[RMDB]
RNA sequence: GGGAACGACUCGAGUAGAGUCGAAAAUGGUUCCUGUGGUUACACCUCGGAAGGCCUCCGCGGACCUGCAGAGAAAAGAAGAAGGGCCCAGAGGGGAAUGAGCCUCGUCGUCGACGAAGGGGUGCAUCUUUGAACAGUAGUUCGCUACUGUUCAAAGAAAAGAAACAACAACAACAAC
Reactivity to 2A3 in 0.01 (KOAc 150mM, MgCl2 10mM, bicine 150mM(pH8.5), 24C), signal-to-noise 1, nucleotides 027 to 126: u050g050g010u010u000c010c030u000g110u100g090g010u060u080a050c020a010c010c000u010c020g070g060a130a040g030g030c010c010u020c030c010g000c070g000g050a080c040c040u010g000c060a020g050a040g040a250a220a040a010g130a070a030g050a060a090g010g010g000c050c000c020a030g090a090g030g000g000g010a040a210u170g030a020g000c010c000u000c030g090u000c030g090u030c110g020a080c020g020a070a050g070g000g000g000u010g060c020a050u080
Reactivity to DMS in 0.01 (KOAc 150mM, MgCl2 10mM, bicine 150mM(pH8.5), 24C), signal-to-noise 1, nucleotides 027 to 126: u020g010g020u000u000c000c010u000g050u000g010g000u010u010a060c110a050c020c010u010c030g010g010a220a080g000g010c120c010u010c030c020g010c280g020g010a050c090c050u000g000c190a130g000a150g000a040a080a150a050g020a080a060g010a040a210g010g030g050c020c000c020a040g000a120g000g000g000g000a070a090u010g040a140g000c060c010u000c030g010u010c010g020u010c140g010a050c050g030a130a140g000g000g000g020u000g000c070a060u000

This 177-nucleotide RNA was probed chemically with 2A3 and DMS. Values are in units of 0.01, from 0 to 300, in steps of 10. Reactivities are given for positions 27 through 126. It was measured as part of the RMDB library VIROID. DMS adducts were read by reverse transcription with MarathonRT. For 2A3 the reverse transcriptase was SuperScript II with manganese.